[RMDB]
Notes
Chemical mapping of a 207-nucleotide RNA with 2A3. Reactivities are given for positions 27 through 156. Source: RMDB library OK3TST, as collected in RNAgym. The RNA was probed in 150 mM KOAc, 10 mM MgCl2 and 150 mM bicine (pH 8.5) at 24 C. For 2A3, 860 sequencing reads were counted.

RNA sequence: GGGAACGACUCGAGUAGAGUCGAAAACUUGCACCAACAACAGCUUACAACCCUGUGACAGGAACAUGCUUCUUCUGCGGCAGCAAUGCCUGCGAUAAAUCAGUAACAGUGGACUGUGAUUACCAACCACAACCAUUGCAGUCUACUAUUCUCGCUGGACGGGUGAAGUUUUCGAACUUCACCCGUCAAAAGAAACAACAACAACAAC
Reactivity to 2A3 in 0.01 (KOAc 150mM, MgCl2 10mM, bicine 150mM(pH8.5), 24C), signal-to-noise 2, nucleotides 027 to 156: c000u050u090g000c030a040c070c000a090a030c040a100a050c040a060g070c020u130u270a010c050a070a120c050c000c000u080g040u070g100a020c010a030g060g060a020a020c030a040u100g010c000u000u110c000u150u030c030u140g020c030g060g010c000a010g060c000a020a080u070g010c000c020u040g010c000g040a030u060a100a200a050u060c020a030g040u080a050a010c000a040g000u010g000g000a020c000u040g000u000g020a010u040u060a110c050c110a140a050c070c090a200c060a130a090c090c060a050u030u030g010c010a000g000u000c000u000a000c000u000a030u040u060c060u020c010g000c030u030g060